[RMDB]
RNA sequence: GGGAACGACUCGAGUAGAGUCGAAAAACGAUGUCGUUCGCGACAUCGUAAAUUGUAUAACCUUGCUUGAAGUCUACUUGGUUGUAAAGCGAGACAAGUCUGUGAGAGUCCUAUUCGUAGGACUCAACGCUGCUUGAGUAUUCGUACUCAAGCAGCGAAAAGAAACAACAACAACAAC
Reactivity to 2A3 in 0.01 (KOAc 150mM, MgCl2 10mM, bicine 150mM(pH8.5), 24C), signal-to-noise 1, nucleotides 027 to 126: a000c010g000a010u000g000u000c010g000u000u010c120g000c020g090a010c010a000u010c010g010u000a000a000a030u070u130g200u030a130u000a130a090c010c000u000u040g060c000u000u020g060a030a000g030u060c000u010a130c160u300u210g030g040u130u060g040u050a040a010a020g000c010g000a000g000a060c030a070a100g110u020c090u030g210u050g090a060g000a000g110u000c000c000u000a030u000u140c230g010u030a000g000g000a000c000u000c000a000a000
Reactivity to DMS in 0.01 (KOAc 150mM, MgCl2 10mM, bicine 150mM(pH8.5), 24C), signal-to-noise 2, nucleotides 027 to 126: a030c010g020a000u000g010u000c000g020u000u020c280g020c010g020a020c010a000u000c010g010u000a010a080a080u000u000g020u010a060u000a110a130c140c020u010u000g010c030u000u010g000a060a160g010u010c040u000a070c100u020u000g010g000u000u000g010u010a070a040a050g000c020g000a040g010a160c110a060a070g010u000c080u000g010u000g010a150g000a000g010u020c010c000u000a020u010u000c150g020u000a000g000g000a000c000u000c000a050a070